[RMDB]
RNA sequence: GGGAACGACUCGAGUAGAGUCGAAAAUGAGAUAGCUAAAUCACCUCGGUAUGAUUAGGGUGAGACCUAGGAACCGUUGGGGUAUUCUCAAAGGAAGCUUUUGCAGUGACGCCCAUGUAAGUGGGAUAAGAACCAACCCACUUCGGUGGGUUGGUAACUCACCAUACGGAUUCGUCCGUAUGGUGAGAAAAGAAACAACAACAACAAC
Reactivity to 2A3 in 0.01 (KOAc 150mM, MgCl2 10mM, bicine 150mM(pH8.5), 24C), signal-to-noise 1, nucleotides 027 to 156: u140g000a030g020a020u190a020g020c130u230a180a040a090u050c020a040c070c010u010c040g050g010u110a040u120g120a250u190u090a000g020g050g000u020g050a040g040a050c000c050u050a010g110g070a050a030c000c000g000u050u170g010g000g000g000u010a090u070u000c000u020c020a090a070a000g150g020a110a020g050c020u040u120u180u130g080c070a040g000u000g050a050c060g000c000c000c000a000u020g090u120a100a100g050u040g010g020g000a050u070a090a130g000a000a000c000c000a000a000c000c000c000a000c000u020u090c150g040g000u000g000g000g000u020u010g000g000u000a000a000
Structure probing data (2A3) for a 207-nucleotide construct. 2A3 adducts were read by reverse transcription with SuperScript II with manganese. The RNA was probed in 150 mM KOAc, 10 mM MgCl2 and 150 mM bicine (pH 8.5) at 24 C. Source: RMDB library M2RFPK, as collected in RNAgym. Values cover nucleotides 27 to 156.